[RMDB]
RNA sequence: GGGAACGACUCGAGUAGAGUCGAAAAAACACAGUGUAGGAUAGGUGGGAGGCUUUGAAGUGUGGACGCCAGUCUGCAUGGAGCCGACCUUGAAAUACCACCCUUUAAUGAAGAAAAACAAAGCCAAACUACAGUAAAGAUUCGUCUUUACUGUAGUAAAAGAAACAACAACAACAAC
Reactivity to DMS in 0.01 (KOAc 150mM, MgCl2 10mM, bicine 150mM(pH8.5), 24C), signal-to-noise 9, nucleotides 027 to 126: a060a040c110a070c130a070g010u000g020u000a040g010g000a100u000a040g010g010u000g000g000g010a200g010g010c000u000u000u010g000a090a080g020u000g010u000g000g010a010c010g010c160c210a080g010u000c010u000g000c000a010u000g000g000a030g010c000c010g000a070c180c030u000u000g000a070a070a060u000a060c010c010a050c010c000c030u000u000u010a070a080u010g000a090a070g010a040a060a050a080a070c110a060a070a100g010c080c080a070a090
Reactivity to 2A3 in 0.01 (KOAc 150mM, MgCl2 10mM, bicine 150mM(pH8.5), 24C), signal-to-noise 7, nucleotides 027 to 126: a000a000c120a010c020a010g070u080g030u090a020g040g040a040u010a030g000g040u040g040g060g020a130g010g000c010u270u170u050g030a030a010g010u000g000u010g010g000a000c000g030c060c010a010g000u000c000u000g000c000a010u020g000g000a000g000c010c000g010a020c000c000u000u020g010a020a010a000u030a010c000c000a030c000c000c010u070u110u120a190a120u210g090a090a130g100a090a120a020a010a010c060a040a070a000g060c030c030a100a070
The record gives the reactivity of an RNA of 177 nucleotides to DMS and 2A3. For DMS the reverse transcriptase was MarathonRT.